Conditions: 150 mM KOAc, 10 mM MgCl2 and 150 mM bicine (pH 8.5), 24 C. Chemical mapping of a 177-nucleotide RNA with 2A3 and DMS. Source: RMDB library OK2TRN, as collected in RNAgym. The 2A3 profile rests on 11,559 reads. DMS adducts were read by reverse transcription with MarathonRT. 2A3 adducts were read by reverse transcription with SuperScript II with manganese.
RNA sequence: GGGAACGACUCGAGUAGAGUCGAAAAGAGACAUCUGGUGGAGUUUGUUACCUGGUCAACAAGCCAGCUUUACCAUAUACUGGCUAAGUCUACAGCAAUGUCCAUGAUUGAGUUGAUCACGAGAUUCCGUAGAUUAAAGAUUCGUCUUUAAUCUACGAAAAGAAACAACAACAACAAC
Reactivity to 2A3 in 0.01 (KOAc 150mM, MgCl2 10mM, bicine 150mM(pH8.5), 24C), signal-to-noise 7, nucleotides 027 to 126: g060a010g000a010c020a190u020c030u060g100g030u070g130g030a040g020u070u120u160g050u010u200a150c000c000u020g020g010u020c010a020a020c010a060a020g000c020c010a010g010c040u150u120u100a140c020c020a070u090a010u050a300c010u010g000g000c000u010a030a030g020u000c030u040a030c020a010g000c020a060a160u090g030u040c080c050a080u130g030a080u040u090g040a040g050u030u030g030a040u030c020a020c140g160a130g010a110u170u000c060
Reactivity to DMS in 0.01 (KOAc 150mM, MgCl2 10mM, bicine 150mM(pH8.5), 24C), signal-to-noise 9, nucleotides 027 to 126: g010a200g010a060c040a070u000c030u000g010g010u000g000g010a060g010u000u000u010g020u010u000a080c040c020u000g010g010u010c030a020a030c050a170a070g000c000c010a010g000c170u000u000u010a140c240c200a080u010a080u010a110c020u000g000g000c010u010a060a070g000u000c030u000a050c070a040g000c180a070a070u000g010u000c130c080a070u000g000a070u010u000g010a130g010u000u000g010a030u000c030a070c150g000a120g000a140u010u000c070